[RMDB]
Conditions: 150 mM KOAc, 10 mM MgCl2 and 150 mM bicine (pH 8.5), 24 C. The record gives the reactivity of an RNA of 177 nucleotides to 2A3.

RNA sequence: GGGAACGACUCGAGUAGAGUCGAAAAACGCUAUCGCUACGGCGAUAGCGAAAACGAGCUGCUAAUUUUACGUUGGACGCCCUUUAAUUUCACGCUGCCAUUUGUGGCUUCCGUUUCGUAUGUUUAAUCCACGUAGCCUAUUCGUAGGCUACGUGGAAAAAGAAACAACAACAACAAC
Reactivity to 2A3 in 0.01 (KOAc 150mM, MgCl2 10mM, bicine 150mM(pH8.5), 24C), signal-to-noise 1, nucleotides 027 to 126: a000c000g000c000u000a000u000c000g020c000u010a010c230g130g050c000g000a000u000a000g000c030g010a010a000a000a000c030g040a000g060c050u060g000c000u010a050a110u020u050u150u120a020c030g030u010u120g040g000a020c040g010c000c000c000u000u040u010a080a140u000u010u080c110a110c000g020c030u050g000c020c030a000u060u000u060g160u070g010g000c000u050u040c030c010g090u020u030u120c100g050u220a120u110g060u000u140u140a080a050
Source: RMDB library RFM100, as collected in RNAgym. The 2A3 profile rests on 616 reads.